[RMDB]
RNA sequence: GGGAACGACUCGAGUAGAGUCGAAAACUCAGGCUGGAUGCACAGGCUUCUGACCUGGAUCUUAACAUGGGAUGACACAUGCUUUUGAGGCCCAGGCAAGGUAGUACAUGCCUUUCAUCCCAGUAGACGCAUAUGUACGUUUCGACGUACAUAUGCGAAAAGAAACAACAACAACAAC
Reactivity to 2A3 in 0.01 (KOAc 150mM, MgCl2 10mM, bicine 150mM(pH8.5), 24C), signal-to-noise 2, nucleotides 027 to 126: c000u000c010a000g120g000c010u030g020g000a020u010g010c120a050c060a150g190g050c020u140u000c030u110g160a280c000c000u010g000g030a050u000c020u050u080a030a040c020a080u000g020g000g050a130u240g090a060c070a020c000a170u110g050c080u150u110u060u090g040a020g010g000c000c000c020a010g010g010c030a050a060g080g030u100a040g030u070a110c010a180u120g000c010c000u000u010u010c010a020u040c040c030c010a020g000u060a030g030a010
Reactivity to DMS in 0.01 (KOAc 150mM, MgCl2 10mM, bicine 150mM(pH8.5), 24C), signal-to-noise 3, nucleotides 027 to 126: c030u010c030a120g000g010c040u000g010g000a020u000g010c160a100c180a070g000g010c010u000u000c050u000g010a180c000c000u000g020g010a050u000c030u000u010a040a080c040a050u000g000g010g010a150u020g010a210c200a100c080a030u000g000c180u000u000u010u030g010a010g000g000c040c020c000a030g010g020c120a030a030g010g040u000a060g030u000a130c230a050u000g000c010c000u000u000u000c020a020u000c050c010c070a030g020u000a100g000a220